The data come from the RNA Mapping Database (RMDB), library M2PK50.
The record gives the reactivity of an RNA of 177 nucleotides to 2A3 and DMS.
DMS adducts were read by reverse transcription with MarathonRT.
The DMS profile rests on 4,913 reads.
For 2A3 the reverse transcriptase was SuperScript II with manganese.
Values cover nucleotides 27 to 126.
RNA sequence: GGGAACGACUCGAGUAGAGUCGAAAAGCAACCACCUUCGGGUGGUUGCAAAUGACGAUGCACGAUGACGAAGACGAAGAUGCUGAAGACGACGUCGAACAAAAAGACCCACGUUCGCGUGGGUCAAGAGAAUGAGUAUGUUCGCAUACUCAUUCUCAAAAGAAACAACAACAACAAC
Reactivity to 2A3 in 0.01 (KOAc 150mM, MgCl2 10mM, bicine 150mM(pH8.5), 24C), signal-to-noise 5, nucleotides 027 to 126: g010c010a000a010c000c000a010c010c020u040u080c200g120g000g000u000g000g000u010u010g000c010a000a000a000u050g000a000c020g030a020u040g040c030a010c060g040a040u130g040a020c040g070a090a050g020a010c020g020a040a030g070a140u160g050c070u100g100a100a020g060a030c040g000a010c010g020u030c020g030a080a010c030a030a110a020a000a010g000a000c000c000c000a000c000g010u030u040c230g010c000g060u000g010g000g000u000c010a000a000
Reactivity to DMS in 0.01 (KOAc 150mM, MgCl2 10mM, bicine 150mM(pH8.5), 24C), signal-to-noise 4, nucleotides 027 to 126: g010c010a000a020c010c000a000c000c000u010u010c200g030g000g060u000g010g020u000u000g000c000a010a020a090u010g010a050c050g000a100u000g010c040a050c040g020a060u010g020a110c060g000a100a090g020a060c070g010a060a110g010a070u000g000c050u000g010a090a060g010a100c030g010a130c070g000u000c020g000a080a110c120a050a080a100a110a110g000a020c000c000c000a010c000g020u000u010c170g010c000g020u000g000g000g000u010c000a000a020